[RMDB]
RNA sequence: GGGAACGACUCGAGUAGAGUCGAAAAGAAGACAACUUCGGUUGUCUUCAAGGGGCUGUUUUUCUCGCUGACUUUCAGCCCAAAACAAAAGAGUGAGCAAAACGAGACUACCCUUCGGGGUAGUCAAUUACGACCAUGUAUUCGUACAUGGUCGUAAAAAAGAAACAACAACAACAAC
Reactivity to DMS in 0.01 (KOAc 150mM, MgCl2 10mM, bicine 150mM(pH8.5), 24C), signal-to-noise 1, nucleotides 027 to 126: g010a000a010g000a000c010a000a000c000u010u020c190g020g000u010u000g010u000c000u000u000c000a070a090g000g000g000g000c010u000g000u010u000u010u000u000c020u010c160g030c000u010g000a050c000u000u000u010c000a020g000c000c010c010a030a020a020a180c150a010a000a000a010g000a010g030u000g000a020g020c010a090a110a100a090c220g000a190g000a010c000u000a020c000c000c000u000u020c180g040g020g000g000u000a000g020u000c000a000a050
Reactivity to 2A3 in 0.01 (KOAc 150mM, MgCl2 10mM, bicine 150mM(pH8.5), 24C), signal-to-noise 1, nucleotides 027 to 126: g010a000a000g000a000c000a000a000c010u050u080c190g050g000u000u000g000u000c030u000u000c020a020a010g060g000g020g000c010u030g020u010u010u000u000u000c070u040c100g010c020u010g050a020c000u000u000u010c000a000g010c000c000c030a010a020a000a000c000a010a010a000a010g020a000g040u100g090a010g000c000a000a110a050a020c070g060a030g020a150c010u010a000c010c010c010u010u070c270g010g000g010g000u040a000g000u000c000a000a000